[RMDB]
An RNA of 177 nucleotides, treated with DMS and 2A3 and read out base by base.
RNA sequence: GGGAACGACUCGAGUAGAGUCGAAAAUGUUCUGCACAUGUCCCGUGGCUAGGUAUACCGCGUUGGGGUAAGACACAUUUGGGUGCCCUGCCAUGCCUGUCAUCCAGAAGUUCUUUCUGGCACUGACUCCUGUGAUAUUAUUCGUAAUAUCACAGGAAAAAGAAACAACAACAACAAC
Reactivity to DMS in 0.01 (KOAc 150mM, MgCl2 10mM, bicine 150mM(pH8.5), 24C), signal-to-noise 9, nucleotides 027 to 126: u010g000u000u010c130u020g010c110a050c030a030u000g010u000c010c010c000g030u010g000g010c030u000a060g000g010u010a060u010a100c030c020g010c150g010u010u010g010g010g010g010u010a070a100g000a120c060a050c060a130u010u020u020g010g010g020u000g000c020c010c020u000g010c020c020a060u010g010c070c060u010g010u000c000a010u020c000c000a010g000a010a020g010u020u030c150u020u000u000c000u000g000g000c060a020c020u000g000a030c020
Reactivity to 2A3 in 0.01 (KOAc 150mM, MgCl2 10mM, bicine 150mM(pH8.5), 24C), signal-to-noise 9, nucleotides 027 to 126: u060g020u050u060c060u200g060c060a020c000a050u070g050u070c000c000c000g020u020g010g000c030u040a010g000g050u050a060u080a220c020c020g050c060g060u080u120g050g020g010g040u090a090a040g130a030c030a000c010a130u090u110u160g060g000g000u030g010c000c000c000u000g000c010c000a020u040g040c010c020u020g000u010c000a120u230c000c000a000g000a020a010g050u210u100c050u050u090u000c000u010g010g000c020a050c040u010g000a000c010